[RMDB]
RNA sequence: GGGAACGACUCGAGUAGAGUCGAAAAUCUGUUUACAAGUAAUCGUUAAGUCCAUGUCUGACUACGGUUGCGGAAACAGAAGCCAGUGGGCGUCAAGUCCGACAUGGACUAUUGGCAGAACUGGUCACUACUCCAUUGAAUUCGUUCAAUGGAGUAGAAAAGAAACAACAACAACAAC
Reactivity to 2A3 in 0.01 (KOAc 150mM, MgCl2 10mM, bicine 150mM(pH8.5), 24C), signal-to-noise 4, nucleotides 027 to 126: u000c000u000g020u020u040u080a100c030a090a030g010u020a030a030u010c010g010u010u130a080a000g000u000c010c020a100u140g000u000c070u070g010a010c000u010a010c010g070g090u010u000g000c000g000g000a020a020a010c020a020g050a040a000g030c000c000a020g010u040g020g070g060c030g010u020c020a020a000g000u000c000c000g010a110c000a110u150g000g000a000c010u010a020u060u030g000g000c000a010g010a030a000c010u010g000g020u030c020a000
Reactivity to DMS in 0.01 (KOAc 150mM, MgCl2 10mM, bicine 150mM(pH8.5), 24C), signal-to-noise 8, nucleotides 027 to 126: u000c010u000g000u010u000u010a070c100a090a140g010u000a040a040u000c030g010u000u000a060a050g010u000c000c060a090u000g000u000c110u010g010a020c000u000a050c030g010g010u000u000g010c030g000g010a050a020a040c050a070g010a070a160g000c000c000a040g020u000g000g010g020c100g010u000c050a040a020g000u000c000c040g000a090c010a080u010g000g000a020c000u000a030u010u000g010g010c010a080g000a180a060c020u000g000g010u000c160a160